[RMDB]
RNA sequence: GGGAACGACUCGAGUAGAGUCGAAAACGUGUUAAGUCUUCUCGUCUAUUAGCGACAGAUAAGGCGUUCAAAGGAUGCGAUUGUAGCUGAGAUAUUUAUGGACAGGAGCUCCUUGGCAGGUGGUACGCCAUGCUGGUUCUUUCGAGAACCAGCAUGGAAAAGAAACAACAACAACAAC
Reactivity to DMS in 0.01 (KOAc 150mM, MgCl2 10mM, bicine 150mM(pH8.5), 24C), signal-to-noise 2, nucleotides 027 to 126: c050g010u000g000u000u010a030a060g000u000c020u010u000c010u000c110g030u020c040u020a110u000u010a070g030c020g010a030c050a040g000a090u060a050a120g030g000c020g010u030u010c060a120a060a150g030g010a040u020g010c030g000a090u010u000g000u000a020g000c000u000g000a150g040a130u020a040u030u000u050a030u000g000g010a030c000a040g000g000a160g000c000u000c070c010u000u000g000g000c020a030g020g000u000g000g000u020a070c200g030
Reactivity to 2A3 in 0.01 (KOAc 150mM, MgCl2 10mM, bicine 150mM(pH8.5), 24C), signal-to-noise 2, nucleotides 027 to 126: c050g060u010g030u120u030a050a040g030u050c000u010u030c010u020c040g000u000c010u020a100u040u180a070g070c020g050a010c020a000g080a080u080a030a070g120g000c010g010u000u010c060a050a040a050g060g000a030u090g000c020g020a040u050u030g050u040a030g000c000u010g030a020g000a020u090a100u120u080u050a060u080g020g010a000c010a040g000g000a000g000c000u010c020c040u010u000g010g030c000a000g090g020u010g020g010u070a040c020g000